This 207-nucleotide RNA was probed chemically with 2A3 and DMS. Conditions: 150 mM KOAc, 10 mM MgCl2 and 150 mM bicine (pH 8.5), 24 C. The data come from the RNA Mapping Database (RMDB), library RSTRND. The 2A3 profile rests on 12,881 reads. For DMS, 5,873 sequencing reads were counted.
RNA sequence: GGGAACGACUCGAGUAGAGUCGAAAAUUACGCUCCAGCUUACGCAAAAGUAGCGUAGGUUUAUCUCUGUUUUGGAGCCGAUCUUUUUGCCAUAUCUACUAACAAAAAAGGUCGUUAUUUCGUAGGUUGCGCUUUUUUGUGUCAUCAAAAAAGCAAACACAUAGUAGCAGUUCGCUGCUACUAUGUGAAAAGAAACAACAACAACAAC
Reactivity to 2A3 in 0.01 (KOAc 150mM, MgCl2 10mM, bicine 150mM(pH8.5), 24C), signal-to-noise 9, nucleotides 027 to 156: u130u060a040c030g000c000u010c000c000a010g010c000u010u000a000c000g000c020a110a150a110a170g160u220a180g020c000g000u000a000g020g020u020u120u050a100u030c060u000c040u100g200u250u120u110u100g000g000a000g000c000c000g000a000u000c000u000u020u010u010u000g010c020c000a010u010a010u010c000u010a010c000u010a030a020c000a000a020a010a010a010a020g010g000u000c010g020u060u080a140u110u170u120c070g000u010a010g000g020u010u060g050c040g000c040u020u010u020u010u000u000g040u040g160u160c070a140u060c030a070a000a000a000a000a000g000c000a000a020a000
Reactivity to DMS in 0.01 (KOAc 150mM, MgCl2 10mM, bicine 150mM(pH8.5), 24C), signal-to-noise 2, nucleotides 027 to 156: u000u000a060c040g030c000u000c000c040a200g010c000u000u000a000c010g030c000a060a120a190a250g040u000a150g010c010g020u000a010g000g040u000u000u000a040u000c040u000c040u000g000u000u000u000u000g030g010a030g040c010c020g000a010u000c000u000u000u000u000u000g020c050c080a180u000a090u000c040u010a120c060u010a300a130c020a010a010a030a040a040a050g010g000u000c010g000u000u000a060u000u000u020c120g020u000a060g020g010u000u000g010c030g020c000u010u000u000u000u000u000g030u000g010u000c140a150u010c000a000a000a000a030a030a030g040c010a040a060a130